This 207-nucleotide RNA was probed chemically with 2A3. Values are in units of 0.01, from 0 to 300, in steps of 10. The data come from the RNA Mapping Database (RMDB), library RNAMAK.
[RMDB]
RNA sequence: GGGAACGACUCGAGUAGAGUCGAAAAGAUGACUUCUUCGGAAGUCAUCAAAAAAACCUUUGUGAACCCGGCUCAACAGCCGUGAAGCUCCCAUUGGGAGCUCACGGACAUGAGCGGUUCACUCUGGUAAAAACUCGCUAUCUUCGGAUAGCGAGAAGAUUACCAUCGUGUUCGCACGAUGGUAAUCAAAAGAAACAACAACAACAAC
Reactivity to 2A3 in 0.01 (KOAc 150mM, MgCl2 10mM, bicine 150mM(pH8.5), 24C), signal-to-noise 1, nucleotides 027 to 156: g010a000u000g010a020c000u020u010c000u000u060c240g020g000a000a000g010u000c000a020u010c000a000a000a000a000a000a000a060c020c000u020u020u040g000u010g020a030a040c080c110c190g300g020c040u000c010a000a050c000a180g060c010c020g010u010g080a040a040g000c020u040c000c060c120a300u230u300g020g010g000a000g000c010u000c000a000c020g020g040a020c020a160u020g000a000g020c000g000g000u000u000c000a000c000u000c000u000g000g050u070a100a080a000a050a030c010u000c000g000c000u000a000u020c010u020u080c280g110g000a000u000a000g000c010g000a000g000a000a010
2A3 adducts were read by reverse transcription with SuperScript II with manganese.